[RMDB]
RNA sequence: GGGAACGACUCGAGUAGAGUCGAAAAUGAGGAAUUGAAGGACAAAACUGAAGAUGUUGAUCAACGGAAGGAUUCAGUGGACUCUAUCGCAGACCAAUUUUCAACAUUUAAUAUUGGUCCCACAAGAGACAUACCUGCCAUUCGUGGCAGGUAUGUCAAAAGAAACAACAACAACAAC
Reactivity to 2A3 in 0.01 (KOAc 150mM, MgCl2 10mM, bicine 150mM(pH8.5), 24C), signal-to-noise 3, nucleotides 027 to 126: u100g040a020g060g110a010a040u080u150g040a110a070g030g030a010c020a040a090a050a000c030u070g010a000a000g070a180u090g070u100u040g040a060u080c030a000a040c050g080g070a010a090g040g010a020u070u010c060a000g060u030g020g100a020c010u000c000u070a110u150c070g030c110a030g070a040c000c010a010a010u040u000u090u160c070a030a030c010a100u050u110u090a060a020u040a050u130u030g000g000u000c000c000c000a020c060a070a000g040a000
Reactivity to DMS in 0.01 (KOAc 150mM, MgCl2 10mM, bicine 150mM(pH8.5), 24C), signal-to-noise 2, nucleotides 027 to 126: u040g000a080g000g000a100a060u000u000g000a250a300g020g000a030c100a040a080a120a090c050u000g000a070a020g000a130u000g100u030u000g000a220u010c020a030a090c140g060g020a150a110g030g050a300u000u000c070a020g000u010g000g000a300c060u000c070u000a060u080c080g010c000a080g000a050c030c000a000a020u000u000u000u000c140a090a070c140a030u000u000u030a000a070u040a180u010u030g000g000u000c000c010c000a050c040a030a070g040a150

Conditions: 150 mM KOAc, 10 mM MgCl2 and 150 mM bicine (pH 8.5), 24 C. The record gives the reactivity of an RNA of 177 nucleotides to 2A3 and DMS. The DMS profile rests on 1,641 reads. 2A3 adducts were read by reverse transcription with SuperScript II with manganese.